Chemical mapping of a 177-nucleotide RNA with 2A3 and DMS. High 2A3 reactivity points to a flexible backbone, as in loops and unpaired stretches. Reactivities are rounded to 0.1 and cut off at 0 and 3. For 2A3, 1,193 sequencing reads were counted. Source: RMDB library OK1LIB, as collected in RNAgym.
RNA sequence: GGGAACGACUCGAGUAGAGUCGAAAAGCUGGGUCGUCAUUGCCCUUGACCAUGUGUUUGAUCACCGUGGUGGCGUAUCGGGCCCCCUGGAUCGCGCCCUGAGCCACCCCGGGUACGCCGGGCACGAGUAGGGUCAAGGGUUCGCCCUUGACCCUACAAAAGAAACAACAACAACAAC
Reactivity to 2A3 in 0.01 (KOAc 150mM, MgCl2 10mM, bicine 150mM(pH8.5), 24C), signal-to-noise 3, nucleotides 027 to 126: g080c060u140g010g000g010u070c060g110u100c110a150u090u170g030c020c000c000u020u090g010a020c010c000a100u030g100u030g050u040u060u120g150a220u040c020a010c070c010g000u000g000g000u000g000g000c070g010u130a070u160c100g000g020g000c040c000c010c000c000u160g150g060a150u160c090g030c020g000c020c000c010u040g020a020g000c010c000a010c020c000c010c000g000g000g010u000a040c030g020c020c060g010g030g040c040a000c020g080a060
Reactivity to DMS in 0.01 (KOAc 150mM, MgCl2 10mM, bicine 150mM(pH8.5), 24C), signal-to-noise 1, nucleotides 027 to 126: g000c100u040g010g020g060u020c040g010u000c130a050u040u060g030c010c050c050u020u000g010a290c070c060a070u000g080u010g000u000u000u000g000a060u000c060a080c000c000g030u000g000g000u000g000g040c000g090u010a060u040c220g000g000g000c010c030c050c050c110u020g010g000a080u000c050g030c250g000c010c030c000u060g000a140g070c050c000a000c000c000c000c060g000g010g100u020a030c150g010c160c040g000g000g010c010a060c050g000a140